[RMDB]
RNA sequence: GGGAACGACUCGAGUAGAGUCGAAAAGGAGGAAGACAUGGGAUUGACACGAUCCAUCAACGUCCUAGUGGUCGGAGCAGCCUUCGUAUUCGUCGUGACGAUGCUUUUCAUCUGACGAAGAACGAUCAUUGGACCGUCCUUUCGAGGACGGUCCAAUAAAAGAAACAACAACAACAAC
Reactivity to 2A3 in 0.01 (KOAc 150mM, MgCl2 10mM, bicine 150mM(pH8.5), 24C), signal-to-noise 1, nucleotides 027 to 126: g130g000a000g040g030a020a110g050a030c010a040u200g040g000g030a010u070u020g040a020c060a030c060g000a040u020c000c000a030u070c000a010a060c020g030u000c000c000u010a020g100u060g010g000u050c060g030g000a100g000c000a000g000c000c040u020u010c000g000u010a010u000u000c000g010u000c000g000u000g080a060c030g060a120u050g020c240u160u190u070u080c000a010u000c000u010g010a000c000g000a000a000g030a110a000c000g010a000u190c040
Reactivity to DMS in 0.01 (KOAc 150mM, MgCl2 10mM, bicine 150mM(pH8.5), 24C), signal-to-noise 1, nucleotides 027 to 126: g000g000a080g000g010a150a080g010a170c250a070u000g020g000g010a000u000u020g000a060c190a040c300g000a040u000c000c090a070u030c090a110a250c000g060u010c000c000u000a070g070u000g000g000u000c000g020g000a080g000c200a040g000c060c090u010u080c060g000u000a090u000u000c000g040u000c050g020u030g000a150c170g010a000u000g070c300u010u010u010u000c000a130u000c000u000g000a010c070g000a000a000g000a040a000c000g000a010u020c180